Chemical mapping of a 177-nucleotide RNA with 2A3 and DMS.
[RMDB]
RNA sequence: GGGAACGACUCGAGUAGAGUCGAAAACAACACACAUCAUUUCUUCUUCAGGAAUUGAAUUUUUAAAGCCAUCCACGGCUUCAGCUCCAGAUAAUUCAGCAAUUCUCAGUGCUACGGGAUGAAUACAGACGUAGGCUAUAUUCGUAUAGCCUACGUCAAAAGAAACAACAACAACAAC
Reactivity to 2A3 in 0.01 (KOAc 150mM, MgCl2 10mM, bicine 150mM(pH8.5), 24C), signal-to-noise 2, nucleotides 027 to 126: c010a080a000c000a010c010a000c010a100u030c020a030u030u130u000c060u030u020c020u070u060c090a040g020g020a020a110u040u060g040a040a030u080u070u000u150u240a130a210a000g000c000c000a000u110c020c030a050c030g000g000c000u040u030c000a000g020c000u010c010c010a000g030a190u080a110a090u230u010c050a020g010c020a030a030u070u000c060u000c000a030g070u040g060c000u030a020c050g000g010g060a040u060g040a030a040u230a100c090a010
Reactivity to DMS in 0.01 (KOAc 150mM, MgCl2 10mM, bicine 150mM(pH8.5), 24C), signal-to-noise 2, nucleotides 027 to 126: c090a040a100c110a040c160a050c080a060u000c010a090u000u000u010c040u010u000c130u000u000c080a060g000g010a050a030u000u000g030a030a040u000u050u010u000u020a030a090a040g030c030c000a110u000c100c130a140c140g000g000c000u000u000c060a040g000c070u000c030c000a060g000a050u000a080a030u000u000c060a030g020c070a050a080u000u000c020u010c070a090g000u000g020c020u000a050c140g030g020g010a080u000g000a060a100u000a070c200a060
Conditions: 150 mM KOAc, 10 mM MgCl2 and 150 mM bicine (pH 8.5), 24 C.